About this RNA
Chemical mapping of a 177-nucleotide RNA with DMS and 2A3. Conditions: 150 mM KOAc, 10 mM MgCl2 and 150 mM bicine (pH 8.5), 24 C. High DMS reactivity at an A or C suggests that its Watson-Crick edge is free. For DMS the reverse transcriptase was MarathonRT.

[RMDB]
RNA sequence: GGGAACGACUCGAGUAGAGUCGAAAAGAUAUGGAUCCCAAGGAGCGACGAUCUACUGUGUCGGAAACGACAUGUAGGGAGCUCCAUGGGAUCCUAAGUCAAACAACGGCUCUUCGGAGCCGUUGAAGGUAGCUUUCUAGUUCGCUAGAAAGCUACCAAAAGAAACAACAACAACAAC
Reactivity to DMS in 0.01 (KOAc 150mM, MgCl2 10mM, bicine 150mM(pH8.5), 24C), signal-to-noise 1, nucleotides 027 to 126: g010a000u010a110u010g000g000a020u010c000c000c000a030a080g050g010a020g060c000g000a050c300g000a030u020c000u000a020c000u000g030u000g000u000c000g000g000a000a000a070c000g050a010c000a000u000g030u010a030g010g000g010a060g020c000u010c000c000a040u000g040g010g000a000u000c000c010u000a000a070g000u000c010a210a140a260c020a020a030c000g010g010c000u010c000u000u030c300g010g040a010g010c010c000g030u010u000g010a060a120
Reactivity to 2A3 in 0.01 (KOAc 150mM, MgCl2 10mM, bicine 150mM(pH8.5), 24C), signal-to-noise 1, nucleotides 027 to 126: g000a010u010a010u060g000g000a000u000c000c000c000a010a050g020g010a000g020c000g300a300c010g000a010u000c000u000a000c030u120g050u020g000u080c000g020g000a020a000a000c000g010a000c010a010u030g000u010a010g000g100g010a030g000c030u020c000c000a000u000g000g000g000a010u000c000c000u000a000a000g000u000c010a090a030a130c000a000a000c000g000g000c000u030c000u180u190c300g190g050a000g000c150c040g020u000u000g000a000a000